Background
This 170-nucleotide RNA was probed chemically with 2A3 and DMS. Values are in units of 0.01, from 0 to 300, in steps of 10. Values cover nucleotides 27 to 129. The 2A3 profile rests on 2,847 reads. 2A3 adducts were read by reverse transcription with SuperScript II with manganese.
RNA sequence: GGGAACGACUCGAGUAGAGUCGAAAAUUCGGGGAAGGUCUCCCAAGAAGAACCAGGAACACCUCAAGAAGAGGAGACUUCCCCAAGGGUAGGUGGAACGCCAGGGAACAAGGAAAUAGGAGAAGGAGCACGGUCCACUUCGGUGGACCGAAAAGAAACAACAACAACAAC
Reactivity to 2A3 in 0.01 (KOAc 150mM, MgCl2 10mM, bicine 150mM(pH8.5), 24C), signal-to-noise 2, nucleotides 027 to 129: u010u000c000g000g020g000g010a000a080g180g080u030c000u030c020c000c010a000a000g040a010a000g010a010a060c090c040a050g080g020a060a020c060a120c050c030u100c050a010a000g110a020a000g040a130g040g000a000g010a000c000u040u020c000c000c000c000a000a040g000g030g040u040a000g000g040u070g020g010a060a000c000g010c060c010a000g000g000g000a010a070c010a030a000g060g000a000a070a000u100a030g000g000a020g010a000a010g040g010a000g000c010a020
Reactivity to DMS in 0.01 (KOAc 150mM, MgCl2 10mM, bicine 150mM(pH8.5), 24C), signal-to-noise 3, nucleotides 027 to 129: u010u070c110g010g020g020g000a000a000g000g000u050c010u020c000c000c060a260a050g010a020a010g120a030a100c180c040a160g000g030a060a040c220a070c080c000u000c190a090a130g030a070a070g040a070g010g010a040g010a090c030u040u050c110c030c030c010a020a010g000g030g020u020a000g040g000u040g000g010a070a020c110g000c020c020a110g020g020g130a100a190c120a140a110g010g010a010a080a160u100a070g000g000a080g040a040a120g000g000a040g110c000a090